[RMDB]
RNA sequence: GGGAACGACUCGAGUAGAGUCGAAAACUAUACCUAAACCUAAUUUACUUAUUGAUAAACUUCACAAUGGAAUAAAAUGUUAGAGAGGCUUACCAGGUGGGGGCUAGGCCUAGGUCUCCAAGGUUUGAAUUGGGAUAGGAUUCGUCCUAUCCCAAUUAAAAGAAACAACAACAACAAC
Reactivity to DMS in 0.01 (KOAc 150mM, MgCl2 10mM, bicine 150mM(pH8.5), 24C), signal-to-noise 3, nucleotides 027 to 126: c100u020a130u010a080c050c050u000a040a090a180c040c030u020a070a070u000u010u010a100c050u000u000a090u000u010g000a070u000a060a070a060c060u010u000c060a090c080a060a080u000g010g020a110a100u010a040a050a070a080u010g000u000u000a090g010a110g010a070g010g010c040u000u010a030c040c010a070g000g010u000g000g020g000g000g000c090u000a060g000g010c020c050u000a050g010g010u000c030u000c030c060a090a070g010g010u000u000u000g020
Reactivity to 2A3 in 0.01 (KOAc 150mM, MgCl2 10mM, bicine 150mM(pH8.5), 24C), signal-to-noise 1, nucleotides 027 to 126: c040u090a090u180a300c010c000u010a040a030a130c000c000u060a100a140u130u040u070a050c030u110u220a040u000u090g020a040u040a100a300a060c070u150u130c130a040c050a210a040u070g020g060a100a010u130a120a200a060a060u130g040u090u090a060g000a010g010a000g150g030c020u040u020a030c030c000a100g000g110u070g030g000g020g010g020c000u000a010g050g000c000c010u020a050g080g010u000c000u000c050c020a000a000g120g000u000u040u230g090
Chemical mapping of a 177-nucleotide RNA with DMS and 2A3. For 2A3, 870 sequencing reads were counted. Reactivities are rounded to 0.1 and cut off at 0 and 3. 2A3 adducts were read by reverse transcription with SuperScript II with manganese.